[RMDB]
RNA sequence: GGGAACGACUCGAGUAGAGUCGAAAAUGGCUCGACAAGUUCAACGGCGUGCUGCUGCCGUUCUAUCUGCUCGGCCUGCUCGCGGCCGUCGCGCUCGCGACGCACCGCUACGGCUACCACGCCGCCAAUUAGUCCGAUCAUUCGUGAUCGGACUAAUAAAAGAAACAACAACAACAAC
Reactivity to 2A3 in 0.01 (KOAc 150mM, MgCl2 10mM, bicine 150mM(pH8.5), 24C), signal-to-noise 2, nucleotides 027 to 126: u060g040g000c020u020c100g010a010c050a150a000g030u090u080c050a110a030c030g040g000c030g050u100g060c070u070g030c030u060g010c000c000g010u000u000c020u080a090u020c010u040g060c070u000c000g020g000c000c030u010g000c040u020c020g020c020g000g020c030c000g060u110c040g000c040g030c130u200c190g020c010g020a010c020g000c020a020c010c000g030c020u020a040c050g010g000c000u080a130c010c040a040c080g000c000c010g020c010c010a040
Reactivity to DMS in 0.01 (KOAc 150mM, MgCl2 10mM, bicine 150mM(pH8.5), 24C), signal-to-noise 3, nucleotides 027 to 126: u020g000g000c010u000c030g010a030c040a060a130g020u000u000c090a070a110c010g010g010c000g030u000g000c140u020g010c050u000g030c000c000g020u000u000c090u000a090u010c080u000g020c170u000c010g010g000c020c040u000g010c090u020c090g000c010g010g020c300c000g030u010c100g000c020g000c190u010c130g010c010g010a020c040g000c100a030c020c010g000c020u000a040c090g010g000c030u020a120c140c090a060c130g010c020c010g000c130c110a050
Record summary: Source: RMDB library OK2TRN, as collected in RNAgym. This 177-nucleotide RNA was probed chemically with 2A3 and DMS. Reactivities are given for positions 27 through 126. For 2A3 the reverse transcriptase was SuperScript II with manganese.